RNA sequence: GGGAACGACUCGAGUAGAGUCGAAAAUUUAACCGAUGGGGUGACACAGAAGGAUAGGGAAUCGCACGAAUGGAAAUGUGCGUCCAAGCAGUGAGUGUGAGAAGUAGGCAAAUCCGCUUCUCGCGAAGCAUGAGCUGUGAUGGGGAAGGAAAUUAAGCCAAUGCCUAAGGUUCGCCUUAGGCAUUGGAAAAGAAACAACAACAACAAC
Reactivity to DMS in 0.01 (KOAc 150mM, MgCl2 10mM, bicine 150mM(pH8.5), 24C), signal-to-noise 2, nucleotides 027 to 156: u000u010u020a050a080c030c020g010a070u000g000g040g020g020u000g000a110c090a130c100a090g010a070a140g020g030a060u010a090g020g030g000a060a060u000c040g060c020a030c000g000a160a150u010g000g010a100a060a130u000g040u000g000c050g000u000c030c030a080a200g010c010a080g020u000g020a280g000u000g000u000g000a030g000a000a010g040u000a060g060g000c030a040a150a160u000c010c020g030c010u000u000c000u000c020g010c060g040a080a190g000c060a100u000g000a270g040c040u000g010u000g010a090u000g020g000g000g000a060a070g020g000a040a070a100u010u000a070a090g000
Reactivity to 2A3 in 0.01 (KOAc 150mM, MgCl2 10mM, bicine 150mM(pH8.5), 24C), signal-to-noise 3, nucleotides 027 to 156: u040u010u020a040a020c000c040g030a070u070g000g030g000g030u020g030a010c020a000c000a070g070a080a000g050g020a050u150a080g050g000g020a040a050u070c010g000c000a000c010g130a080a140u120g080g160a080a010a030u150g000u010g000c000g000u030c000c010a030a040g040c010a010g010u010g090a020g000u050g020u070g050a030g000a000a010g010u210a210g040g000c080a080a060a050u090c000c010g000c010u000u000c000u010c000g020c030g010a010a000g020c040a030u060g010a020g000c010u000g020u040g060a060u120g020g000g020g030a030a040g070g020a020a060a070u150u130a120a050g030
An RNA of 207 nucleotides, treated with DMS and 2A3 and read out base by base. Reactivities are rounded to 0.1 and cut off at 0 and 3. It was measured as part of the RMDB library PDB130.